[RMDB]
RNA sequence: GGGAACGACUCGAGUAGAGUCGAAAAUGUGCCCAUCCGGCUGGCUGGACACACUAGACACCUCCCAGGUCCUCGUGUGUACCUGGUUGAGAGGCUCAUUGCUUGUGAAAAUCCAUUCAUGGUUAACGAGAGAAUAGUGGUUCGCCACUAUUCUCUCAAAAGAAACAACAACAACAAC
Reactivity to 2A3 in 0.01 (KOAc 150mM, MgCl2 10mM, bicine 150mM(pH8.5), 24C), signal-to-noise 2, nucleotides 027 to 126: u060g000u030g000c000c000c000a050u000c010c010g130g000c080u090g050g000c040u030g020g030a000c000a000c000a000c050u030a010g040a030c010a040c030c010u070c020c010c000a000g010g000u030c020c030u060c040g110u100g000u010g000u130a050c000c000u000g000g000u100u170g080a110g000a000g010g020c000u020c020a110u070u170g030c060u040u080g030u010g020a020a040a020a040u000c020c010a050u050u080c040a060u060g070g000u050u110a070a040c080
Reactivity to DMS in 0.01 (KOAc 150mM, MgCl2 10mM, bicine 150mM(pH8.5), 24C), signal-to-noise 2, nucleotides 027 to 126: u000g010u000g010c010c010c010a120u020c010c020g040g020c100u010g030g010c160u010g000g000a060c020a050c010a000c050u000a110g000a070c120a130c070c030u000c090c020c010a150g000g000u000c020c000u000c290g000u020g020u030g010u000a070c050c000u020g020g000u000u010g010a170g000a070g010g010c080u000c050a070u000u000g000c080u000u000g020u010g010a050a060a100a120u000c020c020a070u000u000c080a050u000g000g000u000u000a100a090c130